RNA sequence: GGGAACGACUCGAGUAGAGUCGAAAAGUUGCGGCAUGCGGGAUCUUUAGUUGUGGUGUGUGAAUUCUUAGUUGCAGCAACUAAAGAUCCCUCAGGCUGCAAUGAAAAACAGGGGGUUCGCCCCCUGCGAAUUGAUAGUGUUCGCACUAUCAAUUCGAAAAGAAACAACAACAACAAC
Reactivity to DMS in 0.01 (KOAc 150mM, MgCl2 10mM, bicine 150mM(pH8.5), 24C), signal-to-noise 2, nucleotides 027 to 126: g000u000u000g000c020g020g010c010a040u000g010c280g000g010g010a010u000c020u000u000u000a010g000u000u010g000u000g010g020u010g020u010g030u000g010a050a110u010u010c220u010u000a110g010u000u000g020c020a170g000c000a020a030c000u000a000a000a020g000a020u000c000c000c000u000c010a020g010g010c000u000g000c000a000a000u000g000a060a050a070a100a230c020a010g000g000g020g010g010u000u000c260g000c000c000c010c000c000u000g000
Reactivity to 2A3 in 0.01 (KOAc 150mM, MgCl2 10mM, bicine 150mM(pH8.5), 24C), signal-to-noise 3, nucleotides 027 to 126: g020u000u010g010c000g000g020c000a000u000g010c020g010g010g000a010u000c010u030u000u010a030g010u020u020g030u040g260g240u070g040u030g020u030g180a100a150u270u100c110u180u290a170g010u090u160g000c000a000g000c000a000a000c000u000a000a000a000g010a000u000c000c000c000u000c000a000g000g000c000u000g000c000a010a000u020g000a080a050a010a000a010c000a010g020g010g000g010g000u010u040c070g090c000c000c000c000c000u010g000